[RMDB]
RNA sequence: GGGAACGACUCGAGUAGAGUCGAAAACAGUCACUGACACAGUGUCUCUCUGUCACUCUCUCUCAGAGUCAGAGUGACACAGUGACUGACACUCAGACUCUGUGUCAGACAGUCACUCACUCACUCACUAAGGGUCAGAGUUCGCUCUGACCCUUAGAAAAGAAACAACAACAACAAC
Reactivity to DMS in 0.01 (KOAc 150mM, MgCl2 10mM, bicine 150mM(pH8.5), 24C), signal-to-noise 2, nucleotides 027 to 126: c060a070g070u000c070a060c030u000g000a110c130a150c250a100g010u000g000u000c020u000c110u000c040u000g020u000c090a020c010u000c010u000c150u090c170u020c040a020g000a050g020u010c040a070g020a020g000u020g000a030c010a000c110a020g000u000g010a070c050u010g020a100c160a050c070u000c110a140g000a060c010u000c060u010g000u000g010u010c020a080g000a040c220a050g010u000c060a050c020u000c110a080c040u010c080a100c050u010c050a180
Reactivity to 2A3 in 0.01 (KOAc 150mM, MgCl2 10mM, bicine 150mM(pH8.5), 24C), signal-to-noise 1, nucleotides 027 to 126: c030a000g000u030c020a020c050u050g150a040c010a000c030a250g030u010g000u040c020u010c000u010c010u050g050u160c010a020c010u030c010u000c000u000c030u080c180a070g010a010g050u020c030a020g020a020g000u010g020a000c010a000c000a000g000u010g010a000c000u020g000a000c030a010c100u120c060a000g010a020c000u020c000u080g040u030g060u050c010a040g060a110c040a010g030u010c000a020c040u010c020a030c020u060c030a050c030u030c010a050